[RMDB]
RNA sequence: GGGAACGACUCGAGUAGAGUCGAAAAUGGGCAGAAGUACUGCUCCAGUUGUCACUGGACCUCCCCAGAGUAAACUGCCUUUUGAUGACCAGGGCGAAUUGAGUGAAAUCGUCAUGGACAGAUACGGGACACAAAUAUUGUUCGCAAUAUUUGUGUCAAAAGAAACAACAACAACAAC
Reactivity to 2A3 in 0.01 (KOAc 150mM, MgCl2 10mM, bicine 150mM(pH8.5), 24C), signal-to-noise 5, nucleotides 027 to 126: u060g020g000g000c030a010g010a220a030g100u050a030c010u040g070c020u000c000c000a010g010u130u150g300u210c120a010c050u020g000g020a040c000c030u050c030c010c000c000a020g000a010g020u030a010a030a060c010u030g000c020c010u070u130u070u080g110a090u040g010a020c010c010a000g010g020g000c020g020a070a100u100u100g090a130g140u190g120a050a020a090u010c000g000u000c000a010u010g000g010a010c010a020g040a010u080a090c080g070g080
Reactivity to DMS in 0.01 (KOAc 150mM, MgCl2 10mM, bicine 150mM(pH8.5), 24C), signal-to-noise 7, nucleotides 027 to 126: u000g010g010g010c000a000g000a170a100g010u000a040c020u000g010c070u000c000c010a000g000u000u010g010u000c220a140c010u010g000g010a060c080c190u000c020c010c010c040a110g000a030g010u000a010a070a140c020u000g000c000c000u000u000u000u000g010a170u010g010a090c000c010a040g000g010g000c010g000a020a090u000u000g010a190g030u010g010a060a080a070u000c010g010u000c020a040u000g000g020a150c030a020g000a160u010a080c220g000g000